[RMDB]
RNA sequence: GGGAACGACUCGAGUAGAGUCGAAAACAUGAACCUGCAUUGAUUACGUCCCUGCCCCUGUACACACCGCCCGUCGCUACUACGGAUUGAAUUAUUUAGUGAGGUCUCUGACGCCUUGCGUGUUACGGAACACCCAGAAUUUCGAUUCUGGGUGUUCAAAAGAAACAACAACAACAAC
Reactivity to DMS in 0.01 (KOAc 150mM, MgCl2 10mM, bicine 150mM(pH8.5), 24C), signal-to-noise 3, nucleotides 027 to 126: c110a050u010g000a080a120c030c040u000g020c060a060u010u000g020a090u000u000a100c070g030u020c010c010c030u010g000c030c010c000c040u000g040u000a040c080a080c050a070c050c050g010c050c020c040g020u000c020g010c030u010a060c070u010a100c100g000g010a090u020u020g020a060a050u030u010a080u010u010u000a090g000u020g000a040g000g030u000c080u010c040u000g020a080c040g000c020c010u000u000g000c070g010u020g000u000u010a110c170g000
Reactivity to 2A3 in 0.01 (KOAc 150mM, MgCl2 10mM, bicine 150mM(pH8.5), 24C), signal-to-noise 4, nucleotides 027 to 126: c060a080u050g040a030a060c010c040u000g030c040a090u040u160g090a030u180u040a020c020g120u070c000c000c000u010g010c010c000c000c000u010g030u050a040c080a000c000a000c030c030g030c000c000c000g040u050c020g000c050u040a040c010u030a020c080g070g090a060u030u130g070a090a130u190u160a090u130u180u100a070g050u030g060a040g000g030u000c020u010c060u140g040a040c000g000c000c000u010u000g000c020g000u110g030u070u050a010c120g030